[RMDB]
RNA sequence: GGGAACGACUCGAGUAGAGUCGAAAAAAAGUGAUUAGAUACCGCAGUAGUUCCAGCAGUAAAAGAUGCCGACAUGCUCAUUGGACACAGUGGGCAGGGAGAAAUCUUAAGAGUUCGGGCUCUGGGGAUACCUUUCAUCAUUCGUGAUGAAAGGUAUAAAAGAAACAACAACAACAAC
Reactivity to 2A3 in 0.01 (KOAc 150mM, MgCl2 10mM, bicine 150mM(pH8.5), 24C), signal-to-noise 9, nucleotides 027 to 126: a000a000a010g180u130g020a110u110u120a100g060a130u080a110c020c000g070c050a010g030u290a000g000u170u180c010c000a010g000c010a010g040u110a030a130a040a000g010a010u030g050c020c000g060a080c040a080u020g000c000u000c010a010u000u020g030g030a090c080a030c010a270g010u000g000g000g000c010a000g010g010g010a050g070a030a100a010u020c010u020u030a040a030g080a020g080u040u080c080g000g000g000c000u000c010u010g100g000g010g010
Reactivity to DMS in 0.01 (KOAc 150mM, MgCl2 10mM, bicine 150mM(pH8.5), 24C), signal-to-noise 8, nucleotides 027 to 126: a050a060a070g000u030g000a100u010u020a060g000a170u010a140c000c000g010c020a040g010u050a030g010u000u040c020c020a020g020c030a070g000u010a100a080a030a020g000a020u000g010c300c000g000a190c030a050u000g000c000u000c000a010u000u000g000g020a140c300a090c020a020g040u000g010g010g020c000a010g000g010g000a240g000a040a200a040u000c000u000u010a070a180g000a070g010u010u000c290g020g000g020c010u000c020u000g010g000g010g010
Structure probing data (2A3 and DMS) for a 177-nucleotide construct.
For 2A3 the reverse transcriptase was SuperScript II with manganese.
The data come from the RNA Mapping Database (RMDB), libraries RFM100 and RFMREP.
Values are in units of 0.01, from 0 to 300, in steps of 10.
The reactions ran in a buffer of 150 mM KOAc, 10 mM MgCl2 and 150 mM bicine (pH 8.5), at 24 C.